[RMDB]
RNA sequence: GGGAACGACUCGAGUAGAGUCGAAAACUAUUGUUUUGUGCAAAUGCAGUUGGGUUUAUAAUAAGCACUGCCUUUAUCCAUAAAGCUACUAACCCUUGAGCCUCAAGGGGAAAAGGUAAACAGCUGCAGUCUUUUGAUUGUACAACAAGAAGGCCUACAUUUACCGGCAGUUCGCUGCCGGUAAAUGAAAAGAAACAACAACAACAAC
Reactivity to 2A3 in 0.01 (KOAc 150mM, MgCl2 10mM, bicine 150mM(pH8.5), 24C), signal-to-noise 1, nucleotides 027 to 156: c000u000a030u020u030g030u070u050u180u050g000u020g000c020a060a070a090u030g000c000a000g000u070u000g090g000g010u020u060u060a110u080a300a110u110a140a010g030c030a080c140u090g000c020c020u110u040u070a160u070c010c050a120u110a200a080a000g040c070u130a110c020u020a100a110c000c000c000u000u000g030a070g180c040c030u040c070a020a000g000g000g000g000a000a080a000a000g000g010u040a090a030a060c000a020g020c020u020g000c010a010g030u040c100u080u300u090u170g080a070u060u000g010u020a010c010a020a000c000a010a010g080a100a000g090g060c010c000u020a000